[RMDB]
RNA sequence: GGGAACGACUCGAGUAGAGUCGAAAAAUCUAGAGGCCUAAACAUCCACUUCUGAACAGUCAGUCCUGCACCAAAAAAACCAUUGUACUGUGAAGGGGAUCUUGUCCAGGAAGGGGAGCCCCUGUCACACUUAGUAGCAUUUCGAUGCUACUAAGUGAAAAGAAACAACAACAACAAC
Reactivity to 2A3 in 0.01 (KOAc 150mM, MgCl2 10mM, bicine 150mM(pH8.5), 24C), signal-to-noise 4, nucleotides 027 to 126: a000u050c020u020a040g020a040g100g020c010c030u080a050a060a020c030a070u060c010c010a040c010u050u010c010u050g050a050a010c010a020g070u040c010a000g020u030c020c020u020g000c010a040c030c030a030a040a020a000a080a020a040c030c020a070u080u100g070u100a090c070u050g030u040g080a040a030g010g010g000g000a010u020c010u070u090g100u010c020c020a040g120g080a130a060g040g070g000g000a010g010c020c000c020c010u050g080u080c030a030
Reactivity to DMS in 0.01 (KOAc 150mM, MgCl2 10mM, bicine 150mM(pH8.5), 24C), signal-to-noise 6, nucleotides 027 to 126: a070u010c040u000a100g020a100g010g010c030c030u010a060a080a090c110a090u000c030c030a060c030u010u000c040u000g010a110a050c060a050g000u000c060a070g010u000c030c020u000g010c040a070c050c050a000a000a040a060a060a100a080c130c080a080u000u000g010u010a080c150u000g010u000g010a150a040g000g000g010g000a060u000c030u010u000g010u010c030c040a090g010g010a070a060g000g000g000g000a060g000c010c000c000c010u000g000u010c050a090